RNA sequence: GGGAACGACUCGAGUAGAGUCGAAAAACUGGGAGGAAAGUAUGAGCGCAACUAUCAAUGUGCCUGUUUCGAUCAUCGCCGCUGCAUCGUAUGCGAUGGCUAAAGAAGAUAUUCGCUACUAUCUCAAUGGCAUGAUGAUUGAGAAGUCUCCGCAUGGCAAUUAUCCCUUUUUCGAAAGGGAUAAUUGAAAAGAAACAACAACAACAAC
Reactivity to 2A3 in 0.01 (KOAc 150mM, MgCl2 10mM, bicine 150mM(pH8.5), 24C), signal-to-noise 9, nucleotides 027 to 156: a000c040u050g030g010g010a020g010g050a130a070a050g080u130a100u160g040a100g020c010g000c020a030a060c070u150a070u300c070a120a130u060g000u020g020c000c010u040g050u020u080u030c020g000a030u000c010a000u000c010g010c010c000g000c030u050g020c020a050u040c050g010u030a030u290g020c010g010a010u020g070g000c050u100a150a070a060g120a070a010g030a070u080a100u070u050c010g000c020u010a000c010u010a030u020c050u000c060a040a070u070g000g000c030a030u250g010a020u020g000a000u010u020g020a020g010a070a030g040u010c010u000c010c010g070c090a080u080g100g020
Reactivity to DMS in 0.01 (KOAc 150mM, MgCl2 10mM, bicine 150mM(pH8.5), 24C), signal-to-noise 5, nucleotides 027 to 156: a140c050u010g000g000g020a070g030g000a120a080a140g010u000a080u000g010a090g000c020g040c030a120a140c090u000a190u000c100a090a090u010g000u000g020c030c030u010g010u000u000u000c030g010a050u000c010a010u000c020g030c020c030g020c070u000g000c300a070u010c120g000u000a210u010g040c020g020a040u000g020g000c040u000a060a090a130g000a110a050g020a110u000a130u000u010c040g010c030u000a060c050u000a050u000c050u000c040a040a090u000g020g010c020a110u010g010a040u000g010a040u000u000g010a070g000a070a110g000u000c010u000c030c020g010c070a100u010g020g010

Chemical mapping of a 207-nucleotide RNA with 2A3 and DMS.
The RNA was probed in 150 mM KOAc, 10 mM MgCl2 and 150 mM bicine (pH 8.5) at 24 C.
Values cover nucleotides 27 to 156.
For DMS, 14,715 sequencing reads were counted.